[RMDB]
Annotation:
Structure probing data (DMS and 2A3) for a 177-nucleotide construct.
RNA sequence: GGGAACGACUCGAGUAGAGUCGAAAAGACACCAUGGUGCACCUGACUCCUGAGGAGAAGUCUGCCGUUACUGCCCUGUGGGGCAAGGUGAACGUGGUAGAAGUUGGUGGUGAGGCCCUGGGCAGGAAAGAUCCCUCUGGUUCGCCAGGGGGAUCUUAAAAGAAACAACAACAACAAC
Reactivity to DMS in 0.01 (KOAc 150mM, MgCl2 10mM, bicine 150mM(pH8.5), 24C), signal-to-noise 5, nucleotides 027 to 126: g010a200c120a050c010c010a050u010g000g010u030g020c030a020c010c010u000g010a200c000u000c000c020u010g010a090g010g000a050g010a090a080g000u010c040u010g010c040c040g000u020u020a060c020u010g000c040c000c000u010g020u020g010g000g000g010c100a020a010g000g010u000g000a040a010c050g010u020g000g010u000a050g010a060a090g000u010u010g000g020u010g000g010u010g000a100g010g010c020c000c010u020g000g000g020c060a060g000g000a100
Reactivity to 2A3 in 0.01 (KOAc 150mM, MgCl2 10mM, bicine 150mM(pH8.5), 24C), signal-to-noise 5, nucleotides 027 to 126: g100a010c030a000c080c010a000u030g080g020u150g060c010a010c020c010u040g080a130c000u020c010c010u060g120a070g040g030a080g030a060a010g070u030c020u050g100c040c010g040u060u080a020c010u070g020c000c010c000u100g070u170g100g000g010g010c060a040a050g040g030u030g040a040a000c010g040u050g000g000u030a020g020a100a020g050u070u070g020g070u040g020g020u040g020a030g020g020c000c000c000u030g020g010g000c020a030g030g040a080